An RNA of 177 nucleotides, treated with DMS and 2A3 and read out base by base. The RNA was probed in 150 mM KOAc, 10 mM MgCl2 and 150 mM bicine (pH 8.5) at 24 C. Values cover nucleotides 27 to 126. Source: RMDB library TTRDEL, as collected in RNAgym. For DMS, 1,252 sequencing reads were counted. The 2A3 profile rests on 2,509 reads.
RNA sequence: GGGAACGACUCGAGUAGAGUCGAAAAGAUAUGGACAAUGACUUGACAUGAAGAUCGGAAACGAUAACUUCAACAGCAAGUAUUGUCCUAAGUCAAACUCUUGCAGGAGUUCGCUCCUGCAAGAGAACUAUGGCCAAUUGUUCGCAAUUGGCCAUAGAAAAGAAACAACAACAACAAC
Reactivity to DMS in 0.01 (KOAc 150mM, MgCl2 10mM, bicine 150mM(pH8.5), 24C), signal-to-noise 2, nucleotides 027 to 126: g000a070u020a290u000g000g000a030c000a000a000u000g010a010c000u000u010g000a130c060a260u000g000a000a000g020a060u000c000g040g000a070a080a120c000g000a010u000a110a120c000u000u000c000a030a180c130a180g010c010a000a020g000u000a030u000u000g010u010c000c000u000a030a040g020u000c000a230a100a090c000u000c000u000u000g000c000a000g000g000a000g000u010u020c180g040c000u000c000c000u000g000c000a000a000g000a010g000a030a070
Reactivity to 2A3 in 0.01 (KOAc 150mM, MgCl2 10mM, bicine 150mM(pH8.5), 24C), signal-to-noise 2, nucleotides 027 to 126: g020a010u020a030u120g000g000a000c000a000a020u090g140a180c020u040u040g060a150c010a110u050g000a020a010g010a040u020c010g020g030a040a040a030c020g010a020u080a230a180c010u010u030c010a070a090c080a140g140c000a000a000g040u000a000u000u000g000u000c000c000u000a010a010g020u000c000a040a080a140c010u000c000u030u010g000c000a010g020g030a010g020u110u130c230g010c100u010c010c000u000g000c010a000a000g000a000g000a000a000